The record gives the reactivity of an RNA of 177 nucleotides to DMS and 2A3. For DMS, 64,147 sequencing reads were counted. DMS adducts were read by reverse transcription with MarathonRT.
[RMDB]
RNA sequence: GGGAACGACUCGAGUAGAGUCGAAAAUGUCGUGCAGGUUCCGACUGCCUGACGCCAGGUGCUUUCGUGUCGCUUUUGGCCAUCUGAUGUUUUCACUCAGGGUCAAGGCGCAGGCCAGGACACGGGAUCAAGGGAUCCGCUUCGGUGGGUCCCUUGAAAAAGAAACAACAACAACAAC
Reactivity to DMS in 0.01 (KOAc 150mM, MgCl2 10mM, bicine 150mM(pH8.5), 24C), signal-to-noise 9, nucleotides 027 to 126: u030g010u010c020g010u010g020c040a050g000g010u010u020c050c050g010a140c050u010g000c020c010u000g000a080c050g010c040c030a110g010g020u000g000c050u000u020u010c070g010u010g000u020c010g010c030u000u010u020u010g000g000c000c000a110u050c010u000g000a030u030g000u010u040u030u030c210a070c090u010c000a020g000g000g010u000c010a020a040g010g010c000g000c080a060g000g000c030c040a070g000g000a070c050a040c020g000g000g010a150
Reactivity to 2A3 in 0.01 (KOAc 150mM, MgCl2 10mM, bicine 150mM(pH8.5), 24C), signal-to-noise 9, nucleotides 027 to 126: u150g030u040c020g010u050g080c030a040g020g050u070u040c020c020g040a040c040u040g010c010c000u030g020a100c010g000c010c010a030g000g030u050g030c040u050u150u200c120g090u070g100u130c020g010c040u150u130u070u050g000g000c010c010a170u120c030u010g010a030u100g100u080u080u160u230c100a070c050u010c000a000g010g000g000u010c010a020a030g000g000c000g000c000a000g000g020c030c030a020g010g020a020c020a010c050g010g010g020a040